[RMDB]
RNA sequence: GGGAACGACUCGAGUAGAGUCGAAAAGUGCUUGAGCACGAUAUUGGGGAAGGACACGCCCUUGAGCCGCGCGGUGCGGAUAUAUUGCGCCGUCAUCACCUCGGUCAUCGAGGCGCGGGUCAUCCGCAAGAGCACUCACAUUCGUGUGAGUGCUCUUAAAAGAAACAACAACAACAAC
Reactivity to DMS in 0.01 (KOAc 150mM, MgCl2 10mM, bicine 150mM(pH8.5), 24C), signal-to-noise 2, nucleotides 027 to 126: g010u000g000c020u010u060g020a140g000c030a010c020g000a130u060a110u000u000g000g000g000g000a030a130g010g020a020c000a060c010g000c030c010c000u010u020g000a040g010c020c020g000c300g000c070g000g010u000g000c000g020g010a090u030a060u050a160u040u000g010c080g040c030c060g000u030c050a040u040c070a100c100c030u010c020g010g000u000c090a120u020c000g000a000g000g010c270g030c020g000g000g020u000c000a070u000c000c010g000c070
Reactivity to 2A3 in 0.01 (KOAc 150mM, MgCl2 10mM, bicine 150mM(pH8.5), 24C), signal-to-noise 3, nucleotides 027 to 126: g000u000g010c050u300u300g100a080g030c010a000c000g060a040u050a080u080u270g080g000g000g000a030a100g020g000a000c000a000c060g010c000c000c000u000u000g020a000g000c010c000g000c000g030c040g010g000u010g000c000g000g070a080u060a000u040a030u190u170g090c070g000c010c000g010u070c000a110u060c010a050c000c010u020c000g010g010u030c070a070u030c020g000a020g040g000c090g000c000g000g020g010u010c000a000u000c000c000g110c080